[RMDB]
RNA sequence: GGGAACGACUCGAGUAGAGUCGAAAAAGGCGAUCGGGAUCUGCUCAACGCCGCGUUGGGCAGCUUGGCGGACACCCUGUGGAGCCUGCGCCGGCUCGGCUACCGGUCGCGUCCGCUGUGGCGACCGGGCCGGGGCUAUAUUCGUAUAGCCCCGGCCAAAAGAAACAACAACAACAAC
Reactivity to 2A3 in 0.01 (KOAc 150mM, MgCl2 10mM, bicine 150mM(pH8.5), 24C), signal-to-noise 5, nucleotides 027 to 126: a000g100g000c030g040a090u090c030g050g010g030a050u040c010u050g010c000u010c020a020a020c050g150c220c120g090c100g030u050u050g010g020g000c010a000g010c000u040u070g040g010c020g010g030a030c030a070c050c030c010u040g070u140g090g050a020g010c010c000u050g000c050g020c010c020g030g000c020u050c020g040g000c030u090a080c020c000g000g000u000c010g000c010g040u040c030c020g010c050u120g060u120g090g000c000g000a030c020c010g030
Reactivity to DMS in 0.01 (KOAc 150mM, MgCl2 10mM, bicine 150mM(pH8.5), 24C), signal-to-noise 2, nucleotides 027 to 126: a050g000g000c000g000a080u010c060g010g010g020a100u010c000u010g010c020u010c000a010a040c020g030c120c090g010c120g060u000u000g000g000g000c020a020g010c210u010u010g000g000c030g010g000a090c060a150c020c030c020u000g010u000g000g040a140g000c000c000u020g010c030g010c030c050g000g000c070u000c060g000g020c070u000a160c040c000g000g000u000c000g020c000g000u000c020c060g010c040u000g010u010g000g000c010g000a030c030c050g010
This 177-nucleotide RNA was probed chemically with 2A3 and DMS. It was measured as part of the RMDB library OK1LIB. For DMS, 5,498 sequencing reads were counted. The reactions ran in a buffer of 150 mM KOAc, 10 mM MgCl2 and 150 mM bicine (pH 8.5), at 24 C.